[RMDB]
RNA sequence: GGGAACGACUCGAGUAGAGUCGAAAAGAUAUGGAUUGUGACAUGCGUGUGACCUCGGAAACGAGGUCCACGCAACAGCACACUGUCCUAAGUCAAAGGCUAAUCUUGGUUCGCCAAGAUUAGCCAAGCACGUCUAGAUGUUCGCAUCUAGACGUGCAAAAGAAACAACAACAACAAC
Reactivity to DMS in 0.01 (KOAc 150mM, MgCl2 10mM, bicine 150mM(pH8.5), 24C), signal-to-noise 2, nucleotides 027 to 126: g070a040u050a300u000g000g010a030u000u000g000u000g010a150c030a140u000g000c000g060u010g000u010g010a010c010c010u000c000g000g000a080a130a200c000g010a010g000g000u000c000c000a000c010g000c000a000a000c180a130g000c090a120c040a040c280u000g000u000c000c030u000a080a150g010u010c070a100a060a130g000g000c000u000a000a000u000c010u000u010g000g000u000u000c300g000c000c000a010a010g000a020u000u000a010g010c000c000a010a060
Reactivity to 2A3 in 0.01 (KOAc 150mM, MgCl2 10mM, bicine 150mM(pH8.5), 24C), signal-to-noise 1, nucleotides 027 to 126: g070a000u090a030u180g010g010a030u030u030g060u000g040a110c110a090u030g000c000g000u000g270u300g010a000c000c010u000c020g020g010a090a090a060c010g010a000g000g000u000c000c020a000c000g010c010a000a000c050a000g060c050a000c010a000c070u060g000u000c010c000u040a150a020g050u060c060a100a180a030g040g000c000u010a000a000u000c000u010u020g070g000u070u130c300g000c130c000a000a020g000a000u020u000a020g000c000c000a000a000